[RMDB]
RNA sequence: GGGAACGACUCGAGUAGAGUCGAAAAGAAGCCCAACGGGAAGAUCGACAGCGACAACCUGCCGAGGCUGCCUCAGUGGUCAGCUGCUGGGCUAAACACCGCCGAGACGGGUCAGCGAGCGGCCGGCAGCCGGAGUAGGGUUCGCCCUACUCCGGCUAAAAGAAACAACAACAACAAC
Reactivity to 2A3 in 0.01 (KOAc 150mM, MgCl2 10mM, bicine 150mM(pH8.5), 24C), signal-to-noise 2, nucleotides 027 to 126: g110a010a010g110c010c010c000a000a040c010g030g000g000a060a020g000a100u100c060g020a050c050a060g020c020g020a010c050a040a040c020c060u060g000c000c000g000a090g060g000c000u040g010c000c000u100c030a160g050u130g130g040u080c020a040g000c030u020g020c010u040g010g000g050c020u050a000a000a000c070a040c000c040g070c000c040g070a080g050a090c040g020g000g010u040c010a000g020c000g120a000g000c010g040g000c000c000g060g010c010
Reactivity to DMS in 0.01 (KOAc 150mM, MgCl2 10mM, bicine 150mM(pH8.5), 24C), signal-to-noise 2, nucleotides 027 to 126: g000a040a230g000c000c000c040a120a130c210g020g000g000a110a160g000a050u010c030g030a190c110a130g000c000g000a140c030a140a070c050c000u060g110c110c060g050a090g000g010c020u010g000c010c000u060c090a170g000u030g000g000u010c100a020g040c000u000g000c010u000g000g030g010c060u020a020a060a140c140a210c070c020g030c020c000g000a140g010a110c050g000g000g000u000c050a020g000c030g000a080g050c020g010g000c050c000g000g020c040
Description
Conditions: 150 mM KOAc, 10 mM MgCl2 and 150 mM bicine (pH 8.5), 24 C. This 177-nucleotide RNA was probed chemically with 2A3 and DMS.